[RMDB]
RNA sequence: GGGAACGACUCGAGUAGAGUCGAAAAUGGUGGCCUGAUCAUGGCUGGUGGUGCAAUCGGCGCCGGUAUCGGUGACGGUAUGGCAGGCAAUGCGCUGGUUUCGGGUAUUGCCCGGCAACCUGAGGCACCAUCACCGACGAUUCGUCGUCGGUGAUGGAAAAGAAACAACAACAACAAC
Reactivity to 2A3 in 0.01 (KOAc 150mM, MgCl2 10mM, bicine 150mM(pH8.5), 24C), signal-to-noise 1, nucleotides 027 to 126: u120g000g050u040g040g000c010c080u110g080a170u190c110a160u110g080g020c080u020g050g040u020g050g000u060g010c060a050a070u040c040g020g000c010g000c000c000g010g020u280a250u260c010g000g000u020g010a020c010g030g000u060a120u050g070g010c060a050g020g050c030a030a080u040g020c220g020c030u060g000g210u020u020u210c030g000g000g070u130a130u120u210g040c000c040c000g030g020c020a000a020c010c010u030g000a030g080g000c010a000
Reactivity to DMS in 0.01 (KOAc 150mM, MgCl2 10mM, bicine 150mM(pH8.5), 24C), signal-to-noise 1, nucleotides 027 to 126: u000g010g000u040g000g010c020c020u010g010a090u030c130a050u000g000g000c030u000g020g000u000g020g010u010g030c040a130a060u000c040g010g040c070g020c030c010g020g000u010a050u000c040g030g010u000g010a090c060g020g020u000a030u010g000g030c020a100g020g000c060a060a070u000g000c040g000c020u000g020g020u000u000u000c010g010g000g010u010a120u010u000g000c010c010c020g000g020c100a030a080c020c020u000g000a110g030g000c030a070
This 177-nucleotide RNA was probed chemically with 2A3 and DMS.
High 2A3 reactivity points to a flexible backbone, as in loops and unpaired stretches.
For 2A3 the reverse transcriptase was SuperScript II with manganese.
For DMS, 1,871 sequencing reads were counted.
Values cover nucleotides 27 to 126.
DMS adducts were read by reverse transcription with MarathonRT.